[RMDB]
RNA sequence: GGGAACGACUCGAGUAGAGUCGAAAACUACAAUUGAUGCGCGAUGAAGCCGAAAGAGUUCCCUGCAAUAAUGAUCGAGGGGAAGGUGGGCAGUUGGGUUUCAUCUCUACCAUUGAAAUUCUCAACAAUGUAUACACAUAUUCGUAUGUGUAUACAUAAAAGAAACAACAACAACAAC
Reactivity to DMS in 0.01 (KOAc 150mM, MgCl2 10mM, bicine 150mM(pH8.5), 24C), signal-to-noise 9, nucleotides 027 to 126: c090u020a110c160a070a090u020u020g010a040u010g020c110g020c170g000a040u010g000a110a090g010c020c010g010a060a070a080g010a200g010u000u000c000c000c000u010g000c120a120a080u020a080a090u030g010a110u000c100g010a120g000g000g010g000a040a040g010g020u010g000g000g010c050a060g010u000u010g000g010g010u000u000u000c010a020u000c010u000c040u010a100c170c030a050u000u000g000a050a050a130u000u000c010u000c030a080a110c240a100
Reactivity to 2A3 in 0.01 (KOAc 150mM, MgCl2 10mM, bicine 150mM(pH8.5), 24C), signal-to-noise 9, nucleotides 027 to 126: c060u120a050c050a050a110u060u100g030a030u060g060c070g010c020g060a020u020g030a020a000g010c010c020g150a110a060a020g090a020g040u020u020c000c000c000u010g030c020a080a150u180a120a120u170g090a100u140c090g040a070g000g010g000g020a020a030g080g050u160g020g040g010c030a050g050u090u100g050g000g000u000u000u020c010a030u000c010u000c010u030a060c010c020a010u000u020g020a050a040a040u070u010c030u010c020a020a140c040a060
Chemical mapping of a 177-nucleotide RNA with DMS and 2A3. Source: RMDB libraries RFM100 and RFMREP, as collected in RNAgym. 2A3 is a SHAPE reagent: it acylates the 2'-hydroxyl of flexible nucleotides of all four kinds. The RNA was probed in 150 mM KOAc, 10 mM MgCl2 and 150 mM bicine (pH 8.5) at 24 C. 2A3 adducts were read by reverse transcription with SuperScript II with manganese.